[RMDB]
RNA sequence: GGGAACGACUCGAGUAGAGUCGAAAAAGGCCAAGGCACGAGGAUCGCUUGAGCUCAGCAGUUCAAGCCCAGCCUGGGUUGGUCUUUGAGAAAGCAAGACUCUGUCUCAAAAAAGUGUGGCCUGAAAUCUCGUUUCCAAUUUCGAUUGGAAACGAGAAAAAGAAACAACAACAACAAC
Reactivity to DMS in 0.01 (KOAc 150mM, MgCl2 10mM, bicine 150mM(pH8.5), 24C), signal-to-noise 1, nucleotides 027 to 126: a020g010g020c000c000a080a030g000g000c020a070c240g000a070g000g000a130u000c100g000c000u000u010g010a150g000c000u000c050a050g020c220a040g010u010u000c020a010a030g020c000c020c000a100g020c160c070u000g020g000g010u020u000g010g000u000c010u000u000u000g000a050g000a070a070a020g000c050a040a080g010a090c000u000c020u000g000u010c000u000c010a000a090a050a060a040a090g010u000g030u000g010g040c010c000u000g000a040a100a110
Structure probing data (DMS) for a 177-nucleotide construct.
Values cover nucleotides 27 to 126.
The reactions ran in a buffer of 150 mM KOAc, 10 mM MgCl2 and 150 mM bicine (pH 8.5), at 24 C.